Background:
An RNA of 170 nucleotides, treated with DMS and 2A3 and read out base by base. The data come from the RNA Mapping Database (RMDB), library 15KLIB. DMS adducts were read by reverse transcription with MarathonRT. For 2A3 the reverse transcriptase was SuperScript II with manganese. The 2A3 profile rests on 116,999 reads. The reactions ran in a buffer of 150 mM KOAc, 10 mM MgCl2 and 150 mM bicine (pH 8.5), at 24 C. For DMS, 172,985 sequencing reads were counted.
[RMDB]
RNA sequence: GGGAACGACUCGAGUAGAGUCGAAAACGCUUCCGCCCGCUCGGGAUGGGCCUCAGUGCCGACGAGGAGUCCGCAGGUGGGAGGAUCAGCCACCGGAGAGGGACGCGAUGGUAAGAGUGGAGGAAAGGGGGUACUAUGUUCGCAUAGUACAAAAGAAACAACAACAACAAC
Reactivity to DMS in 0.01 (KOAc 150mM, MgCl2 10mM, bicine 150mM(pH8.5), 24C), signal-to-noise 9, nucleotides 027 to 129: c110g010c040u020u010c020c020g010c020c010c030g000c070u020c070g000g000g010a060u030g000g000g000c010c020u030c080a090g030u040g040c030c050g000a060c060g000a060g020g000a100g020u030c010c030g040c110a080g020g030u020g010g020g000a070g010g010a050u010c110a080g010c020c030a070c030c040g030g000a100g020a070g000g000g000a040c110g010c050g010a050u040g010g010u010a060a070g030a060g030u030g000g000a100g000g010a030a030a050g000g000g000g030
Reactivity to 2A3 in 0.01 (KOAc 150mM, MgCl2 10mM, bicine 150mM(pH8.5), 24C), signal-to-noise 9, nucleotides 027 to 129: c050g010c030u070u010c020c010g030c010c010c010g070c030u050c050g060g010g030a070u060g050g050g020c000c010u080c060a090g040u090g150c020c020g050a060c030g010a020g050g010a020g020u030c020c030g040c060a020g010g040u060g040g020g010a040g020g010a060u070c040a020g050c020c020a030c010c010g010g020a060g010a020g020g010g000a020c040g010c030g060a050u090g020g010u050a050a020g040a030g050u130g030g020a050g020g000a040a030a030g010g000g000g000